[RMDB]
RNA sequence: GGGAACGACUCGAGUAGAGUCGAAAAACCUUUGUGCUUGUUGAAACAGUGCUGAUGACCGUAGAGCUAAUACCCCAUUGGGGGAUAACCGUACGCAAGGCACUGCGGAGGACAAGCACUCUGGUAAAAGUGCGGAAAUGUUCGCAUUUCCGCACAACUACAGACUUAUGUUCGCAUAAGUCUGUAGAAAAGAAACAACAACAACAAC
Reactivity to 2A3 in 0.01 (KOAc 150mM, MgCl2 10mM, bicine 150mM(pH8.5), 24C), signal-to-noise 6, nucleotides 027 to 156: a000c000c000u000u000u010g010u010g000c010u010u010g000u000u070g020a030a020a010c000a000g000u000g010c000u020g020a270u170g020a080c030c040g020u030a030g030a050g110c030u060a080a090u210a300c000c010c000c100a280u300u300g140g000g000g010g000a010u050a040a010c040c040g080u030a010c010g030c050a040a150g000g000c000a000c000u000g000c000g000g050a110g090g090a000c000a000a000g000c000a000c000u000c000u000g000g000u030a080a090a060a050g000u000g000c000g000g010a010a000a000u020g010u070u100c250g010c130a010u000u000u000c000c000g000c000a000c000a000a000
Reactivity to DMS in 0.01 (KOAc 150mM, MgCl2 10mM, bicine 150mM(pH8.5), 24C), signal-to-noise 2, nucleotides 027 to 156: a050c010c000u000u000u000g040u000g010c010u000u000g020u000u000g020a300a230a050c000a020g010u000g010c000u010g000a190u000g050a080c300c010g030u000a040g000a040g000c010u020a110a080u010a180c010c010c000c040a300u000u000g050g010g020g030g000a070u000a030a030c020c000g000u000a020c010g030c000a060a250g020g000c020a020c010u000g020c010g010g010a300g010g010a040c000a030a030g000c010a000c000u020c040u010g000g020u000a050a050a070a140g030u000g030c000g020g000a040a000a020u000g030u000u010c240g000c040a060u010u000u000c000c020g000c040a010c010a000a070

An RNA of 207 nucleotides, treated with 2A3 and DMS and read out base by base. The RNA was probed in 150 mM KOAc, 10 mM MgCl2 and 150 mM bicine (pH 8.5) at 24 C. The data come from the RNA Mapping Database (RMDB), library RNAMAK. For 2A3 the reverse transcriptase was SuperScript II with manganese. For DMS the reverse transcriptase was MarathonRT. Reactivities are given for positions 27 through 156.